Structure probing data (2A3 and DMS) for a 207-nucleotide construct. DMS adducts were read by reverse transcription with MarathonRT. For 2A3 the reverse transcriptase was SuperScript II with manganese. It was measured as part of the RMDB library OK3TST.
[RMDB]
RNA sequence: GGGAACGACUCGAGUAGAGUCGAAAACGGCACUGUGAAAUGGACAAUACGAGAAGUUGAUCUGCACGAAGUGUCUGUAUGCACAUUCCCGGCUUAUGAAGAUACGGGCGUACAGGCGAGACAUGCACAGGUGGAACAGUAUCGAGAAAAACAGAUGGGUAGUACUAUGAUUCGUCAUAGUACUACCAAAAGAAACAACAACAACAAC
Reactivity to 2A3 in 0.01 (KOAc 150mM, MgCl2 10mM, bicine 150mM(pH8.5), 24C), signal-to-noise 6, nucleotides 027 to 156: c020g030g000c020a000c040u030g020u030g070a070a060a100u120g040g020a010c020a050a070u080a110c070g030a040g040a170a070g020u020u030g060a140u040c020u050g020c020a020c090g080a120a030g050u030g000u070c010u000g010u000a020u030g040c050a060c040a200u060u080c000c000c000g000g010c030u180u140a170u250g170a110a030g020a030u080a130c010g000g030g000c000g000u010a000c000a010g000g000c000g020a030g020a030c030a010u060g000c030a010c000a060g020g050u030g020g030a040a000c010a030g050u030a050u080c060g020a040g080a050a070a010a020a000c060a020g000a070u000g110
Reactivity to DMS in 0.01 (KOAc 150mM, MgCl2 10mM, bicine 150mM(pH8.5), 24C), signal-to-noise 4, nucleotides 027 to 156: c090g020g030c020a040c020u000g020u000g020a070a090a120u000g010g020a080c060a040a100u000a110c040g020a180g000a090a130g020u010u010g010a080u000c020u000g000c030a090c050g010a130a150g030u000g010u000c020u000g010u000a030u000g000c020a060c050a180u000u000c010c010c000g020g010c100u010u000a130u020g000a100a090g020a060u010a050c070g010g000g030c060g010u010a020c030a050g020g010c020g000a180g010a110c070a020u000g000c020a070c030a060g020g000u000g010g020a120a050c050a070g010u000a060u000c030g010a180g000a060a070a070a050a090c050a070g000a120u000g010